[RMDB]
RNA sequence: GGGAACGACUCGAGUAGAGUCGAAAAUAAGGCUAGCCGUUGCAGCAGUCGGUCAAUGGGCUGUGUGGCGAAAGCCACCGCAACGUCAUCUUACAUUGACUGGUUUCCAGCCGGGUUACUUGGCAGGAAAUAAGACUUAAGGUAACUGGUUCCCUAAGUAUUAGCUUAAGUUCGCUUAAGCUAAUACAAAAGAAACAACAACAACAAC
Reactivity to 2A3 in 0.01 (KOAc 150mM, MgCl2 10mM, bicine 150mM(pH8.5), 24C), signal-to-noise 6, nucleotides 027 to 156: u170a030a020g070g010c060u060a030g050c040c010g020u030u070g000c010a050g000c000a010g020u000c020g030g000u050c040a030a030u060g040g010g000c020u020g020u030g010u000g090g000c000g040a070a030a000g010c000c000a000c000c020g000c010a020a050c040g110u100c050a110u080c070u140u160a040c010a030u020u010g020a010c010u030g070g000u010u020u010c000c000a010g010c000c000g040g000g010u090u070a080c030u080u140g020g000c020a030g030g030a010a030a010u070a040a020g030a020c040u110u120a040a030g020g010u010a040a010c020u060g070g000u010u010c020c000c000u010a140a020
Reactivity to DMS in 0.01 (KOAc 150mM, MgCl2 10mM, bicine 150mM(pH8.5), 24C), signal-to-noise 3, nucleotides 027 to 156: u000a060a060g010g020c090u000a110g040c100c020g030u000u070g030c030a300g020c020a100g010u000c000g020g020u010c060a070a080u000g010g000g000c010u000g020u000g040u000g020g010c000g030a140a100a230g000c010c000a010c020c160g020c030a030a040c060g010u000c110a110u000c090u000u010a070c020a120u000u000g000a020c000u010g010g020u010u000u000c010c010a120g030c010c020g010g010g000u000u000a050c060u000u010g060g000c030a130g020g010a050a030a040u000a040a150g020a080c080u010u010a060a060g000g010u000a040a060c020u000g030g000u010u000c000c000c010u000a080a300
Structure probing data (2A3 and DMS) for a 207-nucleotide construct. For 2A3 the reverse transcriptase was SuperScript II with manganese. The DMS profile rests on 8,444 reads. Conditions: 150 mM KOAc, 10 mM MgCl2 and 150 mM bicine (pH 8.5), 24 C.